[RMDB]
An RNA of 170 nucleotides, treated with DMS and 2A3 and read out base by base. The RNA was probed in 150 mM KOAc, 10 mM MgCl2 and 150 mM bicine (pH 8.5) at 24 C. For 2A3, 19,627 sequencing reads were counted. For DMS, 10,641 sequencing reads were counted. High DMS reactivity at an A or C suggests that its Watson-Crick edge is free. Reactivities are given for positions 27 through 129.

RNA sequence: GGGAACGACUCGAGUAGAGUCGAAAAUGCAAGCACCUCUGGAGUCAUCCGGCCCCAAAGGAGGAGAGUCCCGCCAGGGGUGAUCCACCCGGAGAUGAGCGGAGAAACCACAUCCAGAGGACCCCUUAAAGCUUUGUCUUCGGACAAAGCAAAAGAAACAACAACAACAAC
Reactivity to DMS in 0.01 (KOAc 150mM, MgCl2 10mM, bicine 150mM(pH8.5), 24C), signal-to-noise 4, nucleotides 027 to 129: u090g000c080a080a090g020c010a070c030c070u050c030u040g000g000a060g020u040c000a220u010c000c040g110g050c020c050c040c030a030a140a070g030g020a130g040g020a020g000a270g050u040c000c000c000g000c180c250a180g040g000g010g000u010g010a150u050c030c030a000c070c020c000g000g000a270g020a100u040g000a020g040c030g000g000a080g070a120a130a140c120c160a170c070a130u000c000c000a000g000a050g090g000a090c000c000c000c020u040u060a090a040a090
Reactivity to 2A3 in 0.01 (KOAc 150mM, MgCl2 10mM, bicine 150mM(pH8.5), 24C), signal-to-noise 8, nucleotides 027 to 129: u140g010c050a030a080g080c030a050c030c000u000c000u000g030g000a020g040u040c010a090u010c070c050g300g040c100c010c000c020a030a060a010g030g010a020g010g000a010g010a020g040u020c020c000c020g110c160c090a090g000g000g000g000u010g000a000u000c000c010a100c030c000c000g040g010a090g000a090u120g040a040g070c000g020g010a050g070a090a070a010c040c010a040c020a170u020c000c000a000g000a010g010g000a020c000c000c000c000u040u170a070a080a010